[RMDB]
RNA sequence: GGGAACGACUCGAGUAGAGUCGAAAACGAUGAUCCACGCCAUGGCAACGUUCGGCGGUAUUGGCGAGGCCUGCAUUACCGCCAUCGAGGCGGUCAAUAUUCUCUAUGAUGAACAGCUCAUCGAUAACCAGUAUCCUCCUUUCGAGGAGGAUACUGGAAAAGAAACAACAACAACAAC
Reactivity to 2A3 in 0.01 (KOAc 150mM, MgCl2 10mM, bicine 150mM(pH8.5), 24C), signal-to-noise 2, nucleotides 027 to 126: c030g070a070u090g000a030u030c020c010a060c010g000c020c000a070u200g130g040c100a180a050c120g120u100u090c150g090g000c060g070g030u090a090u020u110g060g020c030g020a030g120g000c020c030u080g000c000a000u000u030a020c000c030g030c020c000a010u120c060g030a060g010g000c020g000g010u000c020a020a070u060a030u190u010c030u000c030u050a140u180g020a000u000g030a040a030c040a050g020c050u000c010a010u000c000g090a060u070a140a030
Reactivity to DMS in 0.01 (KOAc 150mM, MgCl2 10mM, bicine 150mM(pH8.5), 24C), signal-to-noise 1, nucleotides 027 to 126: c120g030a100u010g020a020u000c030c030a110c040g020c040c030a130u000g030g000c180a050a100c080g020u000u010c070g020g000c060g000g000u000a020u020u000g020g000c000g000a080g010g000c170c040u020g000c080a010u000u000a020c000c020g040c000c020a070u020c130g000a160g020g000c000g000g000u000c070a030a070u000a090u010u000c050u000c000u010a090u000g020a020u000g020a040a130c270a140g010c150u000c010a020u010c010g010a150u010a110a150
The record gives the reactivity of an RNA of 177 nucleotides to 2A3 and DMS. For DMS the reverse transcriptase was MarathonRT. 2A3 is a SHAPE reagent: it acylates the 2'-hydroxyl of flexible nucleotides of all four kinds. It was measured as part of the RMDB library OK2TST. Conditions: 150 mM KOAc, 10 mM MgCl2 and 150 mM bicine (pH 8.5), 24 C. The DMS profile rests on 796 reads.